Conditions: 150 mM KOAc, 10 mM MgCl2 and 150 mM bicine (pH 8.5), 24 C. Structure probing data (2A3 and DMS) for a 177-nucleotide construct. For 2A3, 1,196 sequencing reads were counted. DMS adducts were read by reverse transcription with MarathonRT.
RNA sequence: GGGAACGACUCGAGUAGAGUCGAAAAACAAUUACAUGGUACUUGUAUCAUUGGCCAUAAAUUAAUGGAACAGGCCUAUAAACUGAGGAAAUCGAUCAUUUGUUAUGACUUGAUUUGUAAUCAGACGCGGCAUAUUGUAGUUCGCUACAAUAUGCCGAAAAGAAACAACAACAACAAC
Reactivity to 2A3 in 0.01 (KOAc 150mM, MgCl2 10mM, bicine 150mM(pH8.5), 24C), signal-to-noise 2, nucleotides 027 to 126: a000c040a030a060u210u090a090c040a140u080g070g000u090a180c010u070u100g010u040a100u060c020a020u020u050g000g000c000c020a060u100a100a090a010u110u110a060a050u040g020g010a000a070c020a060g010g000c000c040u030a040u000a010a110a010c000u060g000a010g000g100a000a020a060u020c030g000a010u000c040a020u080u130u290g200u240u170a000u030g010a030c090u000u020g000a040u000u010u080g120u110a060a050u010c030a010g100a100c100g000
Reactivity to DMS in 0.01 (KOAc 150mM, MgCl2 10mM, bicine 150mM(pH8.5), 24C), signal-to-noise 2, nucleotides 027 to 126: a080c010a100a110u050u020a130c060a070u020g030g000u000a010c030u010u000g020u010a050u000c070a060u000u020g000g020c060c050a100u000a040a080a110u000u000a010a030u000g010g030a080a050c100a090g000g000c080c060u030a100u010a050a090a170c030u010g000a040g000g010a020a030a020u020c010g000a020u000c030a000u000u000u030g000u000u020a020u000g010a010c100u000u000g010a030u000u000u000g030u000a240a140u000c010a040g010a190c300g000